Source: RMDB library TTRDES, as collected in RNAgym. An RNA of 177 nucleotides, treated with DMS and 2A3 and read out base by base. The RNA was probed in 150 mM KOAc, 10 mM MgCl2 and 150 mM bicine (pH 8.5) at 24 C. For 2A3 the reverse transcriptase was SuperScript II with manganese. 2A3 is a SHAPE reagent: it acylates the 2'-hydroxyl of flexible nucleotides of all four kinds. The 2A3 profile rests on 19,000 reads. DMS adducts were read by reverse transcription with MarathonRT.
[RMDB]
RNA sequence: GGGAACGACUCGAGUAGAGUCGAAAAGAUAUGGACACCAGGACAGACAUGCUUGGUCAUCGGAAACGAUGGCUGAGCAACAGCUGUCUGGUGUCCUAAGUCAAACACGACACUUCGGUGUCGUGAAUCUUAUAUAUCCGUUCGCGGAUAUAUAAGAAAAAGAAACAACAACAACAAC
Reactivity to DMS in 0.01 (KOAc 150mM, MgCl2 10mM, bicine 150mM(pH8.5), 24C), signal-to-noise 7, nucleotides 027 to 126: g010a040u000a300u010g000g000a020c000a010c010c010a050g030g010a020c010a010g000a070c170a230u010g010c000u000u000g000g000u000c000a000u000c000g010g000a070a060a130c000g010a010u010g000g000c000u000g000a000g010c000a020a030c230a170g010c000u000g000u000c000u000g000g010u000g010u000c000c000u000a010a060g000u000c010a200a110a280c020a010c000g010a010c000a010c000u000u010c200g030g010u000g000u000c000g020u000g000a040a100
Reactivity to 2A3 in 0.01 (KOAc 150mM, MgCl2 10mM, bicine 150mM(pH8.5), 24C), signal-to-noise 4, nucleotides 027 to 126: g010a010u040a020u100g000g010a000c000a000c010c010a050g170g250a050c010a000g070a040c110a270u300g010c000u000u010g020g000u010c000a000u000c000g020g010a040a020a010c010g000a000u000g010g000c000u010g000a000g000c000a020a000c020a020g070c010u010g000u020c000u000g000g000u000g000u000c000c000u000a010a010g000u000c000a010a040a020c020a000c000g010a000c000a000c020u080u170c300g180g000u010g000u000c010g000u000g000a000a000